Source information
This 177-nucleotide RNA was probed chemically with DMS and 2A3. Values are in units of 0.01, from 0 to 300, in steps of 10. DMS adducts were read by reverse transcription with MarathonRT. It was measured as part of the RMDB library OK1LIB.
RNA sequence: GGGAACGACUCGAGUAGAGUCGAAAAGAAAGAAAAGAAAAUCAUCAAAUGAGGUCAAACGUCAGAAUUUCGGGCGUAAAUACGAAAUUAUGCAGAAAGCCGGCUUCAAUGUCGUUUAGAAAGAAAACGAUCCCUCAGUAUUCGUACUGAGGGAUCGAAAAGAAACAACAACAACAAC
Reactivity to DMS in 0.01 (KOAc 150mM, MgCl2 10mM, bicine 150mM(pH8.5), 24C), signal-to-noise 1, nucleotides 027 to 126: g040a030a020a000g000a050a080a110a090g000a030a080a110a170u000c000a020u020c090a090a000a130u000g000a050g000g000u010c120a070a180a110c090g010u030c000a050g000a000a000u000u010u000c020g000g020g000c110g040u040a070a120a150u080a080c000g000a060a000a070u020u000a030u000g010c050a000g020a050a050a100g000c080c000g000g020c040u020u050c000a080a060u020g000u010c070g000u000u000u000a100g030a060a040a060g000a160a080a130a090
Reactivity to 2A3 in 0.01 (KOAc 150mM, MgCl2 10mM, bicine 150mM(pH8.5), 24C), signal-to-noise 2, nucleotides 027 to 126: g020a000a070a010g040a020a020a020a000g160a010a110a000a000u020c020a020u040c030a000a110a170u100g010a070g000g120u270c100a110a000a000c020g000u000c000a000g010a300a030u000u000u000c060g000g010g000c000g070u210a090a000a000u270a010c060g000a000a080a000u030u000a010u080g000c000a000g080a180a190a000g050c000c000g000g000c000u040u130c070a070a230u140g000u050c020g000u000u000u080a010g040a000a250a020g060a000a050a000a010